The record gives the reactivity of an RNA of 207 nucleotides to 2A3. For 2A3, 1,021 sequencing reads were counted.
RNA sequence: GGGAACGACUCGAGUAGAGUCGAAAAGGAUGUUCGCAUCCACACUCACCUUUGUGGUUACUCUUGAUGUGCAAGGAUCGCCCUGCCCAUUGGGCAGUAACGAUCUGAUGACCACAUCGGGGGUAACCACUCUGGUCAUGAUCUUGUUCGCAAGAAAGACAGGGUUUCAGUUCGCUGAAACCCUGUCAAAAGAAACAACAACAACAAC
Reactivity to 2A3 in 0.01 (KOAc 150mM, MgCl2 10mM, bicine 150mM(pH8.5), 24C), signal-to-noise 2, nucleotides 027 to 156: g020g000a000u020g030u120u150c210g030c060a000u000c000c000a000c000a000c000u030c020a010c000c040u030u000u000g000u000g010g020u020u000a000c000u000c000u000u000g000a000u000g020u000g000c010a080a140g010g000a010u000c000g030c030c020c030u000g000c000c000c110a300u270u300g010g000g010c010a000g050u070a090a070c010g000a000u000c000u000g020a080u020g030a040c000c100a000c020a000u000c000g020g000g010g000g000u000a000a000c000c000a000c000u000c000u000g000g000u010c080a170u190g160a140u080c020u000u000g010u070u060c150g130c190a050a010g270a100a100a210